[RMDB]
RNA sequence: GGGAACGACUCGAGUAGAGUCGAAAAGAUAUGGAACGAUGUCUGCUAGUAUGUGGACAUGCUCGAUGAUUCGGAAACGAAUCUAAGAGCAACAGCCACAUACUAGCAGACCGCUCGUUCCUAAGUCCUUUAGAGGCAUGUUCGCAUGCCUCUAAAGAAAAGAAACAACAACAACAAC
Reactivity to DMS in 0.01 (KOAc 150mM, MgCl2 10mM, bicine 150mM(pH8.5), 24C), signal-to-noise 3, nucleotides 027 to 126: g000a090u010a300u010g020g000a020a000c000g010a010u020g000u010c000u000g010c010u000a000g020u000a000u000g010u010g000g000a030c070a230u000g010c000u000c010g020a300u010g000a010u000u000c000g010g020a130a120a260c010g020a020a010u000c000u010a110a300g000a020g000c010a000a040c300a110g000c000c000a020c020a010u000a010c010u010a010g020c000a000g000a000c000c000g000c000u000c000g010u000u010c000c000u000a010a080g020u000c060

This 177-nucleotide RNA was probed chemically with DMS. Values cover nucleotides 27 to 126. It was measured as part of the RMDB library TTRINS. Conditions: 150 mM KOAc, 10 mM MgCl2 and 150 mM bicine (pH 8.5), 24 C.